[RMDB]
RNA sequence: GGGAACGACUCGAGUAGAGUCGAAAAAGACGUUACUAAGCUAUAUUUAGGUGGUAUGAGCUACUUUUGUGUAGAUCAUAGACCUGUGUGUAGUUUUCCACUUUGCGCUAAUGGUCUUGUAUUCGGCACACAAGGACAAGUUCGCUUGUCCUUGUGUAAAAGAAACAACAACAACAAC
Reactivity to DMS in 0.01 (KOAc 150mM, MgCl2 10mM, bicine 150mM(pH8.5), 24C), signal-to-noise 2, nucleotides 027 to 126: a070g000a060c060g020u010u010a030c090u000a070a080g000c010u000a010u000a000u000u000u010a020g010g010u000g010g020u000a010u000g010a010g000c000u000a000c000u000u010u030u000g030u000g020u000a000g010a040u000c000a010u000a010g010a020c000c010u000g000u000g010u010g020u000a000g000u000u000u000u020c070c080a090c150u000u010u010g010c070g010c120u000a050a050u000g010g000u000c080u000u000g000u000a130u010u010c040g010g000c270
Reactivity to 2A3 in 0.01 (KOAc 150mM, MgCl2 10mM, bicine 150mM(pH8.5), 24C), signal-to-noise 1, nucleotides 027 to 126: a000g080a020c060g030u140u040a110c030u050a040a000g050c020u020a010u020a010u060u060u100a020g020g020u030g070g070u000a000u010g000a010g050c000u010a010c010u080u140u120u170g250u040g000u050a010g000a020u020c030a000u030a010g010a020c000c000u010g030u010g000u010g010u000a000g000u000u060u040u090c040c040a090c050u080u140u110g050c070g020c040u000a070a000u040g010g040u020c010u020u040g040u070a300u040u040c030g020g030c010